[RMDB]
Background
The data come from the RNA Mapping Database (RMDB), libraries RFM100 and RFMREP. Structure probing data (DMS and 2A3) for a 177-nucleotide construct. The reactions ran in a buffer of 150 mM KOAc, 10 mM MgCl2 and 150 mM bicine (pH 8.5), at 24 C. Values cover nucleotides 27 to 126.

RNA sequence: GGGAACGACUCGAGUAGAGUCGAAAACGCAGCAAUGGCGUAAGACGUAAUGCGAAAUCAAGCAGUUAGCGGGCUGUGGAUUGCAGCUUGGCCGGCAAAUGGAAUCAGAUCUGGCGACAUUAUUCAGUCGUGAGAUCAUUUUCGAAUGAUCUCACGAAAAAGAAACAACAACAACAAC
Reactivity to DMS in 0.01 (KOAc 150mM, MgCl2 10mM, bicine 150mM(pH8.5), 24C), signal-to-noise 4, nucleotides 027 to 126: c010g030c010a050g000c110a060a070u010g010g000c000g010u010a030a090g010a140c090g020u050a070a050u010g000c020g000a050a100a050u010c090a100a100g020c050a120g000u020u000a090g000c070g000g000g010c030u020g030u010g000g010a110u020u010g010c030a050g000c020u010u020g010g030c040c030g000g000c050a050a080a100u010g000g000a070a070u020c080a080g000a070u010c010u000g000g010c020g020a030c060a040u010u000a080u010u010c080a100g000
Reactivity to 2A3 in 0.01 (KOAc 150mM, MgCl2 10mM, bicine 150mM(pH8.5), 24C), signal-to-noise 5, nucleotides 027 to 126: c030g000c020a040g010c030a040a280u140g140g000c010g030u010a030a030g070a020c020g050u080a040a080u100g010c020g010a000a000a170u100c070a090a070g020c010a020g030u050u100a040g010c040g000g040g000c030u030g020u020g110g110a130u110u200g010c020a010g010c010u040u070g080g000c000c000g010g000c010a040a050a090u090g040g050a020a060u080c040a070g000a030u000c030u040g030g010c010g030a010c020a020u070u120a110u120u180c070a020g070